[RMDB]
RNA sequence: GGGAACGACUCGAGUAGAGUCGAAAAGUUGGCGAUUAAGAGUGUCGAAGAGCAGCUGCACGAUCUGCGCCAGGCCGUCCUGGCGAUGGCCACGGCACUCGGUGCCGCGCUGCCGCACACACCGGAGCCACCAAGCACAAUUCGUUGUGCUUGGUGGAAAAGAAACAACAACAACAAC
Reactivity to DMS in 0.01 (KOAc 150mM, MgCl2 10mM, bicine 150mM(pH8.5), 24C), signal-to-noise 3, nucleotides 027 to 126: g020u000u010g000g020c060g020a140u000u000a070a100g010a090g000u000g030u000c080g020a110a080g030a120g020c020a050g050c060u020g010c030a060c090g010a140u000c100u010g000c060g020c030c040a090g030g000c040c050g000u010c010c030u010g000g010c180g000a010u000g010g000c000c010a230c080g000g000c010a010c040u000c030g020g000u000g010c010c090g000c140g010c050u000g010c000c000g000c110a110c170a090c020a060c030c020g000g010a190g010
Reactivity to 2A3 in 0.01 (KOAc 150mM, MgCl2 10mM, bicine 150mM(pH8.5), 24C), signal-to-noise 1, nucleotides 027 to 126: g140u090u080g000g000c070g050a110u090u230a100a020g020a050g050u000g010u040c070g050a100a010g040a030g080c020a000g000c030u110g010c040a020c100g070a130u050c010u060g020c000g000c060c010a010g000g020c080c020g040u050c010c030u060g190g040c110g050a010u020g020g000c000c020a040c030g000g000c000a010c040u040c030g000g000u030g000c000c000g000c000g020c030u060g000c000c010g000c010a020c010a000c020a000c000c000g030g020a000g030
The record gives the reactivity of an RNA of 177 nucleotides to DMS and 2A3. It was measured as part of the RMDB library OK2TRN.